Description: The record gives the reactivity of an RNA of 177 nucleotides to DMS and 2A3. Reactivities are given for positions 27 through 126. Source: RMDB library OK2TRN, as collected in RNAgym.
RNA sequence: GGGAACGACUCGAGUAGAGUCGAAAACGGUCGUGUGGUGGUGUCGUACAAGGAGAUGCAGUUGUUAGCUGGGUACACGCACCUUGUGUUCGAGACCGCGGAUGCCCUGAGGGACGUGGAUGAGGGCCUCAUAACAGUACUUCGGUACUGUUAUGAGAAAAGAAACAACAACAACAAC
Reactivity to DMS in 0.01 (KOAc 150mM, MgCl2 10mM, bicine 150mM(pH8.5), 24C), signal-to-noise 9, nucleotides 027 to 126: c120g000g010u010c040g020u010g020u010g010g030u000g010g020u000g010u000c040g020u010a030c030a040a040g000g010a080g010a120u000g010c010a080g010u000u000g010u000u000a110g010c050u000g000g000g010u010a050c090a050c060g000c030a050c010c010u000u000g010u000g000u000u000c040g000a060g000a040c030c020g020c040g010g000a110u000g010c030c030c020u000g000a180g000g000g000a070c100g010u000g000g000a120u000g000a100g000g000g010c110
Reactivity to 2A3 in 0.01 (KOAc 150mM, MgCl2 10mM, bicine 150mM(pH8.5), 24C), signal-to-noise 7, nucleotides 027 to 126: c030g030g050u070c040g020u100g060u090g150g060u030g000g020u030g070u030c020g010u030a020c010a030a020g060g010a150g020a080u100g030c030a030g050u160u060g100u160u120a040g000c050u080g040g030g020u060a020c040a000c050g000c010a040c010c000u020u030g030u020g020u060u080c010g000a010g030a030c000c010g010c010g040g010a030u080g010c000c000c010u020g030a110g020g020g030a040c070g040u110g030g030a090u090g030a090g010g010g020c000